[RMDB]
RNA sequence: GGGAACGACUCGAGUAGAGUCGAAAAGAAUCACCGUACCUAUUUAGGUUUACGCGCCAAGAUCGGUGGAUAGCAGCCCUAUCAAUAUCUAGGAGAACUGUGCUAUGUUUAGAAGAUUAGGUAGUCUAUUACACAGCCAUGUUCGCAUGGCUGUGAAUCACAAUUGUGUAUUCGUACACAAUUGUGAAAAAGAAACAACAACAACAAC
Reactivity to 2A3 in 0.01 (KOAc 150mM, MgCl2 10mM, bicine 150mM(pH8.5), 24C), signal-to-noise 3, nucleotides 027 to 156: g040a020a040u090c010a010c040c000g050u070a050c020c020u090a130u180u190u180a040g030g010u020u030u150a120c110g040c030g010c020c010a040a020g040a100u040c020g010g030u020g010g060a040u040a030g000c020a010g020c020c000c000u050a050u100c060a090a070u080a030u210c060u050a030g020g040a080g010a090a060c030u040g000u020g060c020u050a020u080g060u050u040u060a130g020a160a020g010a090u110u070a020g080g030u020a030g030u010c030u040a070u050u090a050c010a000c000a000g000c000c000a000u000g020u020u030c130g020c060a010u000g000g000c000u010g000u000g000a000a010
Reactivity to DMS in 0.01 (KOAc 150mM, MgCl2 10mM, bicine 150mM(pH8.5), 24C), signal-to-noise 5, nucleotides 027 to 156: g010a160a070u000c000a100c010c000g010u000a040c020c010u010a190u000u000u010a050g020g020u000u000u000a070c130g010c090g000c020c040a120a110g000a060u000c040g010g060u000g020g010a090u000a070g010c030a090g020c040c030c020u000a160u000c050a080a110u010a070u000c100u000a090g000g010a150g010a070a070c050u010g010u010g030c050u000a050u000g010u010u000u000a120g010a100a130g010a110u000u000a070g020g020u000a100g010u000c050u000a110u020u000a230c020a010c000a020g010c000c000a000u000g000u000u010c290g020c000a020u000g010g010c000u020g020u000g000a020a100
Chemical mapping of a 207-nucleotide RNA with 2A3 and DMS. For DMS, 13,180 sequencing reads were counted. The reactions ran in a buffer of 150 mM KOAc, 10 mM MgCl2 and 150 mM bicine (pH 8.5), at 24 C. DMS adducts were read by reverse transcription with MarathonRT. 2A3 is a SHAPE reagent: it acylates the 2'-hydroxyl of flexible nucleotides of all four kinds. 2A3 adducts were read by reverse transcription with SuperScript II with manganese.